Record summary: Chemical mapping of a 177-nucleotide RNA with DMS and 2A3. For 2A3, 4,970 sequencing reads were counted. Values cover nucleotides 27 to 126. It was measured as part of the RMDB library OK1LIB. The reactions ran in a buffer of 150 mM KOAc, 10 mM MgCl2 and 150 mM bicine (pH 8.5), at 24 C.
RNA sequence: GGGAACGACUCGAGUAGAGUCGAAAACUAAAAUUGCACAUAGACAAUCUGGCUUUCAAAGAGAUUCAGUUGCUCCUGCGAUCACUAGUCAUAUGGGAUAUGUUAAUAAGGGAUUCUCCCAUAUCAGGGUCAUAUGUAGGUUCGCCUACAUAUGACCAAAAGAAACAACAACAACAAC
Reactivity to DMS in 0.01 (KOAc 150mM, MgCl2 10mM, bicine 150mM(pH8.5), 24C), signal-to-noise 3, nucleotides 027 to 126: c030u000a050a060a090a030u010u000g010c070a060c150a100u030a040g010a130c070a050a000u030c020u000g010g000c000u000u030u000c050a020a140a080g010a050g010a020u000u030c030a030g010u050u030g030c040u030c040c060u000g000c120g000a040u010c020a040c080u000a080g000u020c040a010u040a020u010g000g000g010a100u020a040u010g000u000u020a080a070u030a060a210g000g010g000a150u020u010c070u020c000c030c020a030u020a040u040c130a210g000
Reactivity to 2A3 in 0.01 (KOAc 150mM, MgCl2 10mM, bicine 150mM(pH8.5), 24C), signal-to-noise 7, nucleotides 027 to 126: c020u080a060a040a070a110u060u110g030c040a020c030a100u150a050g070a050c020a020a130u030c030u030g040g010c010u010u120u150c160a180a180a030g090a060g030a110u050u090c040a050g060u070u040g060c020u020c000c010u000g020c020g010a020u040c000a020c100u030a020g080u040c000a010u010a040u060g010g000g030a040u040a040u110g140u120u110a150a100u140a200a170g120g020g030a040u090u040c050u000c050c000c000a010u020a020u040c050a060g110